[RMDB]
RNA sequence: GGGAACGACUCGAGUAGAGUCGAAAAUCAACAGUGUAUGGUAGCUGGAUGUUUUGGAUGUUUUCAAAAUAAACACCUAUUUGUAGCUAUGUUUUUAGAUUCAUCUCUAAUGCUGCACUCACGGGAAAAAAUCAGCAGGCCUGUAUUAACUAGAAAAUCAAAUCAUUCCAUUCGUGGAAUGAUUUGAAAAAGAAACAACAACAACAAC
Reactivity to DMS in 0.01 (KOAc 150mM, MgCl2 10mM, bicine 150mM(pH8.5), 24C), signal-to-noise 1, nucleotides 027 to 156: u000c040a080a110c030a040g070u000g010u000a090u010g040g030u020a060g020c010u000g000g030a160u000g000u000u000u000u000g020g000a010u000g010u000u000u000u010c050a110a020a150a130u000a030a040a100c010a040c010c000u000a060u000u000u000g040u000a020g000c030u020a050u000g020u000u000u000u000u000a050g000a100u000u000c070a130u000c120u000c020u000a060a080u010g030c010u000g020c070a100c040u000c040a110c070g000g010g010a000a030a100a070a070a090u010c050a030g000c000a100g000g040c050c040u000g010u000a080u000u010a050a070c040u000a150g000a100a080a120a130
Reactivity to 2A3 in 0.01 (KOAc 150mM, MgCl2 10mM, bicine 150mM(pH8.5), 24C), signal-to-noise 3, nucleotides 027 to 156: u080c020a010a110c010a060g030u020g030u130a100u120g030g030u040a040g020c040u040g010g090a070u070g060u050u050u040u080g040g010a090u020g050u070u150u000u090c060a050a100a010a020u100a050a050a050c050a030c030c010u040a100u040u130u040g100u050a020g000c010u040a050u160g050u030u160u020u080u020a020g000a070u030u130c040a110u040c030u000c000u040a060a000u090g010c020u020g010c010a010c040u060c010a060c010g070g000g080a060a080a040a010a010a040u040c030a020g000c000a010g150g040c000c000u010g030u010a140u100u100a110a040c040u030a040g070a090a130a030a030